[RMDB]
RNA sequence: GGGAACGACUCGAGUAGAGUCGAAAAUAAGUCUUCUUCGGAAGACUUAAAAUAAGCUGACCAAGCUAUGAGGUCAAUAUCGUCAUGCACAAUAGAUUAAAAAGCCGAAAAGGUUCGCCUUUUCGAAUGGUUAUAAAUUCUUCGGAAUUUAUAACCAAAAAGAAACAACAACAACAAC
Reactivity to DMS in 0.01 (KOAc 150mM, MgCl2 10mM, bicine 150mM(pH8.5), 24C), signal-to-noise 1, nucleotides 027 to 126: u000a010a010g010u010c000u000u010c000u000u010c120g100g000a010a000g000a010c000u000u000a030a020a050a160u010a060a120g020c110u000g000a160c010c010a060a080g040c060u010a050u010g000a130g000g000u000c040a100a150u000a070u000c130g010u000c080a090u000g000c070a050c140a040a060u000a050g000a140u020u000a060a060a090a150a250g010c230c030g010a010a000a030a020g000g000u010u010c180g010c020c000u000u000u000u000c000g000a030a020